[RMDB]
An RNA of 177 nucleotides, treated with 2A3 and read out base by base. For 2A3, 500 sequencing reads were counted. The RNA was probed in 150 mM KOAc, 10 mM MgCl2 and 150 mM bicine (pH 8.5) at 24 C.
RNA sequence: GGGAACGACUCGAGUAGAGUCGAAAACCUCCAACCUUGUUUCCCUCCUCCUUUGUCACUGUGGAGAAACAGGAAGGAAUGUUUAUUAAAAAAGGCUGACUAGGGUCACACCCAUAGUAAUAUCAGACCCCUUGGAAGGGUUCGCCCUUCCAAGGGGAAAAGAAACAACAACAACAAC
Reactivity to 2A3 in 0.01 (KOAc 150mM, MgCl2 10mM, bicine 150mM(pH8.5), 24C), signal-to-noise 2, nucleotides 027 to 126: c000c000u000c000c000a000a040c000c000u040u120g050u030u050u040c060c000c000u000c020c000u100c000c090u220u280u210g120u160c100a010c100u140g040u050g000g030a050g000a020a000a000c010a010g010g000a000a000g000g000a000a090u070g020u000u080u030a300u100u230a070a180a070a000a000a020g040g100c090u020g030a130c020u040a000g080g000g050u070c000a000c000a000c030c010c010a060u070a010g030u040a040a040u020a150u140c020a000g070a130